[RMDB]
RNA sequence: GGGAACGACUCGAGUAGAGUCGAAAAGGACUGGGCUCCGUUCGAUGGCGACAGCGAUCUUAUUCAGGAUAACUCGUUGCUGGGCGGAGACUUAGCAACGCAAUAUCUGAUCGAUAAAGGUCAUACACGCUCAUGGCAUGUUCGCAUGCCAUGAGCGAAAAGAAACAACAACAACAAC
Reactivity to DMS in 0.01 (KOAc 150mM, MgCl2 10mM, bicine 150mM(pH8.5), 24C), signal-to-noise 1, nucleotides 027 to 126: g010g000a130c010u030g000g000g020c010u010c000c000g010u000u000c030g000a230u010g020g000c000g020a010c020a060g000c300g020a000u000c000u020u000a180u000u000c210a100g000g010a030u000a120a130c080u000c120g000u000u010g000c000u000g000g010g000c040g040g000a040g000a050c000u000u000a010g000c100a040a060c060g010c190a170a060u010a050u000c060u000g000a040u040c080g010a040u000a120a100a150g000g020u010c040a050u020a150c250a100
Reactivity to 2A3 in 0.01 (KOAc 150mM, MgCl2 10mM, bicine 150mM(pH8.5), 24C), signal-to-noise 1, nucleotides 027 to 126: g080g030a030c020u050g010g020g000c020u000c030c010g010u000u030c040g130a190u210g000g030c030g000a020c010a010g010c000g040a020u010c000u040u090a200u290u060c090a010g050g000a000u010a000a030c000u010c060g000u000u000g000c010u060g020g000g000c030g040g000a030g000a040c000u050u080a000g000c000a000a050c030g000c090a040a150u040a110u050c090u060g010a010u050c000g030a070u120a170a130a000g000g000u060c020a000u100a100c100a010